Source information: Chemical mapping of a 177-nucleotide RNA with DMS.
[RMDB]
RNA sequence: GGGAACGACUCGAGUAGAGUCGAAAAGAUAUGGAGCUUCACACGUCAGGCUGUAGACAUGUCCGAGGGAUCGGAAACGAUCCGUAGGACAACAGCUACAGCCUGACGUGUGAGAGCUCCUAAGUCACAUAAUACAGUUCUUCGGAACUGUAUUAUGAAAAGAAACAACAACAACAAC
Reactivity to DMS in 0.01 (KOAc 150mM, MgCl2 10mM, bicine 150mM(pH8.5), 24C), signal-to-noise 4, nucleotides 027 to 126: g000a040u000a300u000g010g000a010g040c010u000u000c000a010c000a020c000g000u000c010a000g000g030c000u010g000u000a010g000a050c110a270u000g000u010c000c000g010a300g000g000g010a010u000c000g030g010a100a110a210c010g010a010u000c000c000g000u000a300g000g000a010c000a010a060c300a150g010c000u000a000c010a000g000c000c010u000g000a000c000g010u000g000u000g000a020g000a010g010c000u000c000c000u000a010a050g010u000c050a260
Reactivities are given for positions 27 through 126. DMS adducts were read by reverse transcription with MarathonRT. Reactivities are rounded to 0.1 and cut off at 0 and 3.